Record summary: Structure probing data (2A3) for a 177-nucleotide construct.
RNA sequence: GGGAACGACUCGAGUAGAGUCGAAAACAAGCAGAUUCUUACAUGCCUUACAUGAGAGACAUGGGAAUUAGUGAUAAGUCUCCAUACUCCGCUCAGAUGAACCCUGCUUUGACUACGUUCUGUCAUGGGGGCCUAAGUAGUUCGCUACUUAGGCCCCAAAAGAAACAACAACAACAAC
Reactivity to 2A3 in 0.01 (KOAc 150mM, MgCl2 10mM, bicine 150mM(pH8.5), 24C), signal-to-noise 1, nucleotides 027 to 126: c120a110a060g070c000a000g050a000u070u060c150u000u280a070c000a000u010g020c020c000u170u300a120c010a140u250g100a190g000a000g090a120c000a000u070g020g020g000a120a160u000u090a090g080u220g160a040u040a210a000g100u000c010u000c000c000a090u070a060c000u000c000c000g000c000u030c030a000g000a120u000g150a120a090c000c000c000u000g120c120u000u170u300g000a000c010u000a000c130g010u000u020c030u000g060u150c000a120u250g030

Annotation:
The 2A3 profile rests on 347 reads.